[RMDB]
RNA sequence: GGGAACGACUCGAGUAGAGUCGAAAAUAGCUGCUGCUCGUGCAGUGAGUGCGACAUCACCAAAUUGCGGGAAAUCCCUAAAGCUUUGACUACCAAGUGCGGCGCCGAAAGGCUCGCAUGGCCAGGGUAAUGACCUCGGGUAUGGUAACAACGUCAAGUUCUUGUGAGUCUUCGGACUCACAAGAACAAAAGAAACAACAACAACAAC
Reactivity to 2A3 in 0.01 (KOAc 150mM, MgCl2 10mM, bicine 150mM(pH8.5), 24C), signal-to-noise 1, nucleotides 027 to 156: u090a010g100c040u060g010c010u000g000c010u040c200g200u220g030c000a020g000u050g070a030g030u060g030c040g100a040c000a110u150c040a020c060c040a000a120a130u200u190g030c050g000g010g020a060a030a100u050c030c000c030u120a090a120a000g040c010u080u030u070g000a010c000u020a000c010c070a050a000g000u000g010c000g000g050c160g000c060c000g050a090a020a000g010g020c030u050c000g050c000a020u000g010g040c000c000a020g000g010g010u100a140a140u120g030a010c000c010u050c040g000g000g000u080a260u160g030g000u000a000a030c000a010a010c010g000u000c030a000a030